[RMDB]
RNA sequence: GGGAACGACUCGAGUAGAGUCGAAAAUUGAAGUUGAACCGUCCUGUUAUCGAAAGAUAGGCAGAAGAUACGAAAUGUGUGACAGCAUGGGAAGUAAAGGCAGACCGUGGUUCCCUUGAGUAUCUUAAUUAGGGGGACGAGUUCGCUCGUCCCCCAAGAGGUAAAAUAACUUCGGUUAUUUUACCUCAAAAGAAACAACAACAACAAC
Reactivity to DMS in 0.01 (KOAc 150mM, MgCl2 10mM, bicine 150mM(pH8.5), 24C), signal-to-noise 1, nucleotides 027 to 156: u000u010g010a020a300g020u000u000g000a050a120c010c030g000u000c020c000u010g030u000u000a050u000c030g080a120a100a180g010a050u010a020g030g030c080a040g070a130a090g010a040u020a020c030g000a090a060a050u010g040u020g030u030g000a100c120a140g020c060a070u000g020g000g010a090a060g040u000a030a110a100g010g020c040a110g040a150c050c030g000u000g020g010u000u000c000c010c000u000u000g030a160g000u000a150u000c070u000u010a080a110u020u000a160g020g010g010g100g040a010c000g010a030g020u000u010c230g000c010u000c000g020u000c020c010c000c000c000a000a010

This 207-nucleotide RNA was probed chemically with DMS. Values cover nucleotides 27 to 156.